[RMDB]
Description
Chemical mapping of a 177-nucleotide RNA with 2A3 and DMS. The 2A3 profile rests on 1,959 reads. The data come from the RNA Mapping Database (RMDB), library RFM100. Reactivities are given for positions 27 through 126.
RNA sequence: GGGAACGACUCGAGUAGAGUCGAAAAAACCUGCAGACUGGUAAGCAAACACACACACUUCAGUUGACCCGGGCAAGGUUCUAGUAGGAAGUACUAUGUGAUUUUUUUUUUUUUUUCACACUCAGAAUCCAUUAGGUUCUUUCGAGAACCUAAUGGAAAAAGAAACAACAACAACAAC
Reactivity to 2A3 in 0.01 (KOAc 150mM, MgCl2 10mM, bicine 150mM(pH8.5), 24C), signal-to-noise 3, nucleotides 027 to 126: a000a000c010c010u010g000c020a030g040a130c020u050g060g000u120a100a030g020c060a030a130a050c040a000c000a000c000a010c010a010c070u040u050c060a060g030u090u060g080a050c000c000c020g020g000g000c040a070a030g040g000u070u030c030u050a040g020u040a030g060g090a130a010g040u040a050c030u060a090u150g000u040g000a010u010u010u000u000u000u000u000u000u000u000u000u000u030u030u030c010a010c000a020c030u040c030a020g060a030a050
Reactivity to DMS in 0.01 (KOAc 150mM, MgCl2 10mM, bicine 150mM(pH8.5), 24C), signal-to-noise 1, nucleotides 027 to 126: a110a020c010c000u000g020c040a030g020a140c090u000g040g000u020a070a110g000c040a120a030a040c140a040c080a070c180a070c150a100c020u000u050c060a060g040u010u000g020a040c060c010c000g010g000g000c030a070a020g010g000u020u000c040u000a100g010u020a020g000g000a050a140g010u010a050c030u000a050u020g010u010g000a010u000u000u000u000u000u000u000u000u000u000u000u000u000u030u000c000a020c050a040c140u010c060a040g000a040a130
For 2A3 the reverse transcriptase was SuperScript II with manganese.